RNA sequence: GGGAACGACUCGAGUAGAGUCGAAAAGUCCUUGGUCCCCAAUGCACUGGAUUACAUCCGCACGGUCAAGGAGCUGGGCAACAGCCUGGACAAGUGCAAGAACAAUGAGAACCUGCAGCAGAUCCUCCGGGACGCUGCAGUUCGCUGCAGCGUCCCGAAAAGAAACAACAACAACAAC
Reactivity to 2A3 in 0.01 (KOAc 150mM, MgCl2 10mM, bicine 150mM(pH8.5), 24C), signal-to-noise 1, nucleotides 027 to 126: g000u020c000c000u000u000g030g020u020c010c000c000c020a000a110u090g020c000a000c090u080g020g000a130u130u000a050c000a270u000c000c000g020c020a050c110g000g060u040c050a000a150g070g000a010g070c000u000g000g040g000c010a140a190c030a030g090c010c010u040g000g000a000c130a200a000g030u080g010c080a040a000g110a130a000c110a120a270u250g000a030g000a040a170c000c000u000g000c000a000g010c000a000g070a130u000c000c000u010c020
Conditions: 150 mM KOAc, 10 mM MgCl2 and 150 mM bicine (pH 8.5), 24 C. Structure probing data (2A3) for a 177-nucleotide construct. The data come from the RNA Mapping Database (RMDB), library OK1LIB.